This 177-nucleotide RNA was probed chemically with DMS.
RNA sequence: GGGAACGACUCGAGUAGAGUCGAAAAGAUAUGGACAAUCUUGAGGGUGUUACGUCAUUGAGUCCUGUUUCGGAAACGAAAUUGGACAAUGAUGUGACGUAACACCCUCAAGAGUUGUCCUAAGUCAGCUAUAAAGAACGUUCGCGUUCUUUAUAGCAAAAGAAACAACAACAACAAC
Reactivity to DMS in 0.01 (KOAc 150mM, MgCl2 10mM, bicine 150mM(pH8.5), 24C), signal-to-noise 4, nucleotides 027 to 126: g000a070u000a300u000g010g010a010c000a020a060u000c000u000u000g000a010g010g020g010u000g010u000u000a000c000g010u000c000a010u010u000g000a270g000u010c000c000u000g000u000u000u000c000g010g000a130a130a250c000g020a000a000a020u010u010g000g010a030c000a170a120u010g010a120u010g000u000g000a010c020g020u010a010a000c000a000c000c000c000u000c010a000a000g000a010g020u000u000g010u000c010c010u000a000a090g000u000c080a170
The data come from the RNA Mapping Database (RMDB), library TTRINS.